[RMDB]
This 207-nucleotide RNA was probed chemically with 2A3. The RNA was probed in 150 mM KOAc, 10 mM MgCl2 and 150 mM bicine (pH 8.5) at 24 C.

RNA sequence: GGGAACGACUCGAGUAGAGUCGAAAAAGAAAGACUUUGAGACGACUCACCAAAGAGGGGUGGAAGUUUUGACUGUUCUUCCGGAUGGCUUCGCCGUGGAAAGUAUAGAAAAAUAUCUUUCUCGUUCGGGCUCUGUAACAACCAGAAAGAAAAAAUACAGAAAGAAAGGGUUCGCCCUUUCUUUCUGAAAAGAAACAACAACAACAAC
Reactivity to 2A3 in 0.01 (KOAc 150mM, MgCl2 10mM, bicine 150mM(pH8.5), 24C), signal-to-noise 1, nucleotides 027 to 156: a000g080a000a060a010g010a000c020u190u060u070g000a040g010a000c020g050a030c020u070c040a010c000c030a000a070a060g050a010g000g000g010g020u010g010g000a050a040g000u000u050u070u090g050a040c030u000g040u010u010c020u080u010c020c020g000g100a050u090g080g010c010u140u080c030g000c020c000g060u010g080g070a040a010a110g080u190a020u240a080g150a080a040a120a000a000u200a000u190c020u040u020u010c050u040c020g060u090u060c010g000g100g000c010u000c050u150g090u160a080a070c050a060a040c020c040a020g090a050a030a050g100a030a040a150a000a010a300u300a050
Notes:
It was measured as part of the RMDB library OK3TST. Values are in units of 0.01, from 0 to 300, in steps of 10.